RNA sequence: GGGAACGACUCGAGUAGAGUCGAAAAGAUAUGGAUCCUAAGCAGCCGAAGAACGCUAUCGGAAACGAUAGCGGGAGGACCCUGCGAAGGAUCCUAAGUCAAAGUGCCAACCUUCGGGUUGGCACAAGCUAUACGUACGGUUCGCCGUACGUAUAGCAAAAGAAACAACAACAACAAC
Reactivity to 2A3 in 0.01 (KOAc 150mM, MgCl2 10mM, bicine 150mM(pH8.5), 24C), signal-to-noise 2, nucleotides 027 to 126: g020a000u040a030u130g010g000a000u020c000c010u030a080a000g000c010a010g030c040c110g230a300a070g020a060a030c010g010c010u000a000u000c000g000g070a090a060a000c000g000a010u010a010g010c000g000g000g010a020g020g020a020c250c020c040u000g030c030g000a020a040g030g000a000u000c000c000u000a050a000g040u020c030a130a010a130g000u010g000c000c010a000a000c010c000u060u130c300g160g020g000u000u000g000g000c000a000c010a000a000
Reactivity to DMS in 0.01 (KOAc 150mM, MgCl2 10mM, bicine 150mM(pH8.5), 24C), signal-to-noise 3, nucleotides 027 to 126: g000a030u000a300u010g000g010a020u000c000c000u020a020a300g000c000a010g010c150c040g000a090a100g000a260a220c000g010c000u000a000u000c000g000g000a100a090a120c000g010a010u000a000g000c000g010g000g010a140g000g000a100c180c250c020u000g000c020g000a300a030g000g010a000u000c010c000u000a010a070g000u000c060a060a130a080g000u000g010c000c000a010a000c000c010u000u010c210g030g000g010u010u000g000g030c000a020c000a010a030